[RMDB]
Chemical mapping of a 177-nucleotide RNA with DMS and 2A3. The RNA was probed in 150 mM KOAc, 10 mM MgCl2 and 150 mM bicine (pH 8.5) at 24 C. 2A3 adducts were read by reverse transcription with SuperScript II with manganese. High 2A3 reactivity points to a flexible backbone, as in loops and unpaired stretches.
RNA sequence: GGGAACGACUCGAGUAGAGUCGAAAAAUAGCAGGAGGAAUAGCAAAUGUACAUGGGCCUUACUCAGGAUUACCACAGUCUGCUCUCAAUUCUGAGGUAUUGACUAGUAGGUUAGCCAACGAGGUAGUCUGACGUAGUUGUUCGCAACUACGUCAGAAAAAGAAACAACAACAACAAC
Reactivity to DMS in 0.01 (KOAc 150mM, MgCl2 10mM, bicine 150mM(pH8.5), 24C), signal-to-noise 2, nucleotides 027 to 126: a070u000a060g040c020a030g000g010a120g010g000a120a060u010a060g000c080a030a050a070u010g020u000a070c110a100u000g000g000g010c060c030u000u000a080c070u000c020a080g010g010a070u000u000a060c030c020a110c080a030g010u000c030u000g000c040u000c060u000c050a020a160u010u000c150u020g000a030g000g010u000a030u000u000g010a040c030u000a110g020u000a070g010g010u010u000a060g000c020c010a050a110c150g010a030g000g000u000a070g020
Reactivity to 2A3 in 0.01 (KOAc 150mM, MgCl2 10mM, bicine 150mM(pH8.5), 24C), signal-to-noise 2, nucleotides 027 to 126: a020u100a000g020c000a000g010g080a000g060g070a040a140u060a080g060c030a070a050a090u140g020u100a010c010a090u060g050g050g030c030c010u030u110a030c040u040c040a020g000g040a020u010u090a010c010c010a010c020a010g000u010c000u020g020c040u000c010u040c140a080a300u300u070c120u190g000a010g020g000u030a110u050u170g020a010c010u000a080g010u030a060g020g000u020u000a010g050c030c000a010a060c050g010a010g000g030u090a050g080